[RMDB]
RNA sequence: GGGAACGACUCGAGUAGAGUCGAAAAGAUAUGGACGUCCCAGGACACAAUGAUGCAUCCUCGGAAACGAGGAUGUUGAGUGUGGUGGGAGCGUCCUAAGUCAAAUCACAGAUGUUCGCAUCUGUGACGAGGUAAUUAGCUUCGGCUAAUUACCUCGAAAAGAAACAACAACAACAAC
Reactivity to 2A3 in 0.01 (KOAc 150mM, MgCl2 10mM, bicine 150mM(pH8.5), 24C), signal-to-noise 2, nucleotides 027 to 126: g020a010u090a030u200g000g010a000c000g050u040c000c010c050a000g300g140a050c030a030c010a120a300u160g020a010u050g030c000a000u010c000c040u010c010g020g000a000a080a020c020g010a060g080g000a010u000g010u010u000g000a050g020u120g000u150g060g200u020g010g020g020a240g210c010g010u000c000c000u000a020a020g000u010c050a150a030a090u080c000a000c010a000g010a000u000g080u110u210c300g000c130a000u030c010u010g000u020g010a040
Reactivity to DMS in 0.01 (KOAc 150mM, MgCl2 10mM, bicine 150mM(pH8.5), 24C), signal-to-noise 3, nucleotides 027 to 126: g000a040u010a300u000g000g010a010c000g020u000c000c000c000a080g060g000a110c000a010c000a170a270u010g000a180u000g010c010a000u000c000c000u010c000g010g000a080a080a230c000g020a010g010g010a010u000g000u000u000g000a100g010u000g040u010g000g050u010g010g020g000a070g060c020g000u000c000c000u000a000a110g000u000c040a080a150a280u010c000a000c000a000g010a010u000g020u010u040c300g000c010a020u010c000u000g000u000g000a020
Chemical mapping of a 177-nucleotide RNA with 2A3 and DMS. For 2A3 the reverse transcriptase was SuperScript II with manganese. For 2A3, 2,872 sequencing reads were counted. DMS adducts were read by reverse transcription with MarathonRT.